[RMDB]
RNA sequence: GGGAACGACUCGAGUAGAGUCGAAAAGUCUAGCGAAUGGAUCCCACCCGGGACACACGCAAGUCGCGAAUUACGCCGACCGGCCAAGGUCAAUGGCAGAACUCAACUGCAUGAGUAAGCUAGACGACGAUAGUGCGUGGUUCGCCACGCACUAUCGAAAAGAAACAACAACAACAAC
Reactivity to 2A3 in 0.01 (KOAc 150mM, MgCl2 10mM, bicine 150mM(pH8.5), 24C), signal-to-noise 1, nucleotides 027 to 126: g000u000c000u000a020g020c010g030a090a090u150g140g030a140u000c000c000c000a020c010c030c000g000g040g040a000c000a010c000a000c100g000c090a080a000g060u080c050g060c040g030a140a110u190u120a110c000g000c030c080g040a020c000c000g080g070c120c080a100a060g030g000u080c060a050a130u190g030g000c010a010g010a100a000c070u040c120a040a130c030u050g000c040a040u060g000a010g080u040a000a000g020c000u000a010g020a010c010g000a020
Reactivity to DMS in 0.01 (KOAc 150mM, MgCl2 10mM, bicine 150mM(pH8.5), 24C), signal-to-noise 1, nucleotides 027 to 126: g070u000c000u000a020g000c020g000a200a060u020g020g020a140u020c000c030c000a240c300c150c040g070g020g030a080c050a070c060a040c140g000c020a080a010g010u020c110g000c080g010a130a240u010u000a120c140g000c040c000g050a010c000c300g000g000c080c090a100a080g000g020u000c010a070a030u030g000g000c000a030g000a120a060c070u010c170a120a080c090u000g000c020a040u000g030a070g000u000a080a190g010c040u020a010g000a000c040g000a170
Structure probing data (2A3 and DMS) for a 177-nucleotide construct. 2A3 adducts were read by reverse transcription with SuperScript II with manganese. For DMS the reverse transcriptase was MarathonRT. For 2A3, 1,100 sequencing reads were counted.